[RMDB]
This 177-nucleotide RNA was probed chemically with 2A3 and DMS. 2A3 adducts were read by reverse transcription with SuperScript II with manganese. The RNA was probed in 150 mM KOAc, 10 mM MgCl2 and 150 mM bicine (pH 8.5) at 24 C. The data come from the RNA Mapping Database (RMDB), library OK1LIB.

RNA sequence: GGGAACGACUCGAGUAGAGUCGAAAACGCCCUAUCGGUGACCUCAGCUCAAGGAAGCGUUGAUUCUGCAGGAGCAAGUAGCAUGGGCGGAAGCGGAGGUGCGGCAGUGGCCAGUGGGAGCCUACCCAAUGGAGGAGGAUUUCGAUCCUCCUCCAUUAAAAGAAACAACAACAACAAC
Reactivity to 2A3 in 0.01 (KOAc 150mM, MgCl2 10mM, bicine 150mM(pH8.5), 24C), signal-to-noise 4, nucleotides 027 to 126: c040g030c000c000c010u060a100u160c070g120g020u080g090a130c010c000u020c040a020g020c010u050c060a040a120g080g010a120a000g060c030g070u050u060g070a170u110u030c010u060g010c040a040g050g050a040g000c040a050a020g040u060a030g050c040a090u090g040g010g000c020g000g030a030a020g020c030g000g030a040g050g010u060g050c020g040g000c000a050g080u070g010g050c000c010a020g020u080g010g020g000a030g000c020c000u050a040c020c010c010
Reactivity to DMS in 0.01 (KOAc 150mM, MgCl2 10mM, bicine 150mM(pH8.5), 24C), signal-to-noise 5, nucleotides 027 to 126: c100g010c010c000c010u000a110u000c110g000g000u000g040a110c060c010u000c110a120g000c160u000c040a110a120g010g000a120a060g000c120g010u010u010g000a110u020u000c040u020g020c080a180g030g010a110g020c040a090a060g020u030a120g030c080a030u010g000g000g010c030g000g000a100a060g000c030g000g010a080g000g010u010g020c090g000g000c050a040g020u020g020g020c010c040a090g030u020g000g000g010a110g010c050c040u010a110c020c020c030